RNA sequence: GGGAACGACUCGAGUAGAGUCGAAAAGGCGGAUUGAUUCUGGUGGGCAUCGUUGCGGUGGCCGGGCUCCGUCGGUUGGACACAUUCACCUCGGGUUCCCAGAACAUGACCGGUCGGUGGGCUGCACAGUCAGUUGAAAUUUCGAUUUCAACUGACUAAAAGAAACAACAACAACAAC
Reactivity to DMS in 0.01 (KOAc 150mM, MgCl2 10mM, bicine 150mM(pH8.5), 24C), signal-to-noise 4, nucleotides 027 to 126: g020g010c030g000g000a060u000u010g000a080u010u000c030u010g010g020u010g020g000g020c040a030u010c060g020u010u020g030c050g030g030u000g000g020c020c030g020g010g000c050u000c010c030g020u000c030g000g010u000u000g000g010a070c090a070c100a140u010u010c090a080c220c010u010c020g000g000g020u000u000c010c000c010a120g000a090a070c120a070u010g010a070c060c040g010g010u000c040g000g020u000g000g000g000c060u000g000c090a090c190
Reactivity to 2A3 in 0.01 (KOAc 150mM, MgCl2 10mM, bicine 150mM(pH8.5), 24C), signal-to-noise 3, nucleotides 027 to 126: g030g000c030g040g020a060u060u110g040a060u200u100c040u110g010g050u080g070g120g000c020a040u050c050g130u130u160g070c040g030g010u020g000g080c000c000g000g000g000c010u030c010c000g000u020c030g000g000u040u050g070g000a000c020a010c010a110u150u100c030a060c030c010u010c000g010g010g000u030u010c000c010c010a000g010a030a030c030a070u120g050a060c020c020g010g030u060c020g010g010u060g000g030g000c010u030g000c040a030c010